RNA sequence: GGGAACGACUCGAGUAGAGUCGAAAAGAUAUGGACGGGCCACAAGGCCUUGGACCUCGGAAACGAGCUAGGCUGUGGCCGUCCUAAGUCAAAUCGUAUAACAAGAGUUCGCUCUUGUUAUACGAAACGUACUCUAGGGCUUCGGCCCUAGAGUACGAAAAGAAACAACAACAACAAC
Reactivity to DMS in 0.01 (KOAc 150mM, MgCl2 10mM, bicine 150mM(pH8.5), 24C), signal-to-noise 1, nucleotides 027 to 126: g010a040u000a300u000g000g010a000c020g030g000g010c020c000a030c020a090a200g030g020c000c000u000u010g010g000a130c300c000u000c000g000g000a050a100a260c020g020a020g020c020u000a060g020g000c000u000g020u000g000g020c030c000g020u010c000c000u000a000a030g020u010c010a150a080a070u000c000g010u000a000u000a000a000c000a040a020g000a000g020u000u020c260g020c000u000c000u000u000g020u000u000a000u000a010c000g000a000a040a090
Reactivity to 2A3 in 0.01 (KOAc 150mM, MgCl2 10mM, bicine 150mM(pH8.5), 24C), signal-to-noise 1, nucleotides 027 to 126: g030a000u060a030u150g050g000a000c110g100g210g170c030c000a020c040a100a180g260g100c040c000u010u020g000g080a140c000c020u000c010g010g000a040a090a110c000g020a010g000c020u020a000g000g000c050u060g000u010g000g000c010c000g000u000c000c000u000a000a030g040u000c010a060a010a210u030c010g010u000a000u000a000a000c000a010a000g000a040g030u090u210c240g080c170u020c000u000u000g020u000u000a010u000a000c000g010a000a000a000
Structure probing data (DMS and 2A3) for a 177-nucleotide construct. For 2A3 the reverse transcriptase was SuperScript II with manganese. For DMS, 1,043 sequencing reads were counted. For DMS the reverse transcriptase was MarathonRT.